Chemical mapping of a 177-nucleotide RNA with 2A3 and DMS. The DMS profile rests on 989 reads. For 2A3, 1,721 sequencing reads were counted. 2A3 adducts were read by reverse transcription with SuperScript II with manganese. Values are in units of 0.01, from 0 to 300, in steps of 10.
RNA sequence: GGGAACGACUCGAGUAGAGUCGAAAAGAUAUGGAUAUUUAGAGCAUGACCUCGGAAACGAGGUAUGUAGUAGAAAUCAUCCUAAGUCAAACCCCUAGCAGGAGAGUUCGCUCUCCUGCUAGGGGAAGUUCUAACGUCAGUUCGCUGACGUUAGAACAAAAGAAACAACAACAACAAC
Reactivity to 2A3 in 0.01 (KOAc 150mM, MgCl2 10mM, bicine 150mM(pH8.5), 24C), signal-to-noise 2, nucleotides 027 to 126: g020a010u080a080u160g000g000a010u030a080u050u110u090a180g040a070g090c040a000u060g300a290c000c000u030c020g000g010a060a060a040c020g000a010g000g030u020a010u000g000u040a060g100u010a040g110a040a020a020u090c100a000u000c030c000u030a180a050g060u030c010a020a080a300c000c010c010c010u000a000g000c020a010g000g000a000g000a010g050u100u150c290g010c140u020c010u040c000c020u000g000c000u000a000g000g040g000g010a010a000
Reactivity to DMS in 0.01 (KOAc 150mM, MgCl2 10mM, bicine 150mM(pH8.5), 24C), signal-to-noise 1, nucleotides 027 to 126: g020a040u000a300u000g000g000a000u000a010u000u000u030a140g030a300g000c010a000u000g030a020c000c000u000c000g020g000a090a080a170c000g010a010g020g010u000a000u010g000u000a080g010u000a170g010a020a020a010u000c210a000u000c000c020u010a050a190g010u000c000a100a190a080c020c000c000c010u000a000g010c010a000g000g010a000g030a010g030u000u010c280g000c000u000c020u000c020c000u010g000c000u010a000g000g000g000g000a000a010